[RMDB]
RNA sequence: GGGAACGACUCGAGUAGAGUCGAAAAUGAGUGAUUAUGCAACCAUACAGGAACCUUACAUAAGCGCAAGUAGUUGAAUAGUGGAUUCAAGAAGCAAAACUUUACUACCGGUAAAAACAUUAGAACGCCAGUUAGAUACCUUCGGGUAUCUAACUGGAAAAGAAACAACAACAACAAC
Reactivity to DMS in 0.01 (KOAc 150mM, MgCl2 10mM, bicine 150mM(pH8.5), 24C), signal-to-noise 2, nucleotides 027 to 126: u000g010a120g020u000g010a160u000u000a110u000g030c030a030a130c020c040a120u000a080c090a090g000g040a070a050c130c080u010u010a040c080a070u040a060a140g000c060g010c080a040a020g010u000a080g010u000u000g060a050a080u010a100g030u000g000g020a110u020u000c070a040a060g000a100a080g000c070a090a010a040a120c080u020u000u000a020c040u020a080c110c070g000g010u020a030a050a050a050a030c130a180u010u010a060g010a080a110c300g000
Reactivity to 2A3 in 0.01 (KOAc 150mM, MgCl2 10mM, bicine 150mM(pH8.5), 24C), signal-to-noise 2, nucleotides 027 to 126: u190g010a050g080u040g070a050u050u180a020u120g030c010a000a060c000c010a030u060a080c020a010g000g040a070a010c010c000u050u040a040c020a050u180a060a010g040c080g030c100a040a000g010u000a000g020u100u050g030a070a040u030a040g080u040g090g050a030u030u050c050a050a030g050a020a000g030c020a020a050a000a090c020u110u100u030a010c000u020a030c000c060g100g000u030a060a110a040a030a000c040a120u130u130a120g020a080a000c050g000